[RMDB]
RNA sequence: GGGAACGACUCGAGUAGAGUCGAAAAUCGACCAUGGCAGGCAGGUUGUCCUUAGUGCCCUGUAGAAACAGUCUAUGCCUCUGUUGAAAACCCGUCUCCCACCAGAUCGUUGUCCGGGCUUAAGACCCUAGUAGGUUAACUUCGGUUAACCUACUAGAAAAGAAACAACAACAACAAC
Reactivity to 2A3 in 0.01 (KOAc 150mM, MgCl2 10mM, bicine 150mM(pH8.5), 24C), signal-to-noise 2, nucleotides 027 to 126: u070c010g040a020c000c010a070u040g060g000c000a020g020g010c000a000g000g030u050u030g050u030c020c010u070u080a060g050u050g130c000c000c000u060g040u060a020g100a020a090a010c010a020g040u000c050u080a050u110g010c020c010u020c040u050g110u100u050g050a060a070a040a100c010c000c000g000u040c030u010c020c020c010a020c020c000a030g020a120u070c020g040u040u030g050u010c040c010g030g000g000c000u050u080a090a020g030a080c030c000
Reactivity to DMS in 0.01 (KOAc 150mM, MgCl2 10mM, bicine 150mM(pH8.5), 24C), signal-to-noise 6, nucleotides 027 to 126: u010c090g010a100c040c030a090u000g010g000c050a060g010g010c050a080g010g010u000u000g010u000c020c030u000u010a090g020u000g010c040c050c020u000g020u000a050g020a120a060a070c060a060g010u000c050u000a100u000g010c040c010u000c060u000g000u010u000g010a090a050a080a090c040c010c020g000u000c060u000c020c010c010a060c100c070a070g000a070u010c060g000u000u000g010u000c030c040g000g010g000c040u000u000a070a090g000a140c080c050
An RNA of 177 nucleotides, treated with 2A3 and DMS and read out base by base. For 2A3 the reverse transcriptase was SuperScript II with manganese. Values are in units of 0.01, from 0 to 300, in steps of 10. DMS adducts were read by reverse transcription with MarathonRT. The data come from the RNA Mapping Database (RMDB), library OK2TST. High DMS reactivity at an A or C suggests that its Watson-Crick edge is free.